[RMDB]
RNA sequence: GGGAACGACUCGAGUAGAGUCGAAAAGGUGGGCUUAGAAGCAGCCACCCUUUAACGAGUUCGUAACAGAUCACCCAUCGAGGUCAGAGGCACCUAAAAUGGACGGGAAUUAAUCCAGUUGCCGAUAACAUUUCAAUCACUUCGGUGAUUGAAAUGUAAAAGAAACAACAACAACAAC
Reactivity to DMS in 0.01 (KOAc 150mM, MgCl2 10mM, bicine 150mM(pH8.5), 24C), signal-to-noise 4, nucleotides 027 to 126: g050g030u020g000g010g020c000u000u030a120g010a170a130g010c280a090g030c000c000a040c020c000c010u010u000u010a060a100c120g020a090g030u030u040c030g020u000a040a100c150a090g000a080u030c050a160c020c030c050a230u010c060g000a090g000g000u000c050a060g010a150g000g020c040a040c050c030u000a020a050a110a090u000g010g000a050c020g030g000g000a060a090u020u020a060a110u010c030c000a080g000u000u010g000c040c060g000a110u010a120
Reactivity to 2A3 in 0.01 (KOAc 150mM, MgCl2 10mM, bicine 150mM(pH8.5), 24C), signal-to-noise 5, nucleotides 027 to 126: g030g020u070g010g020g020c010u090u140a110g080a270a020g110c050a010g030c000c000a030c020c000c000u020u050u030a070a020c030g020a030g050u130u060c010g010u020a080a060c030a050g030a050u060c020a040c010c000c010a010u060c020g020a030g030g000u030c010a030g050a090g110g000c010a010c020c020u090a090a100a060a090u090g010g020a020c040g030g020g060a020a050u110u090a060a020u080c010c000a010g010u080u020g040c000c010g010a010u060a020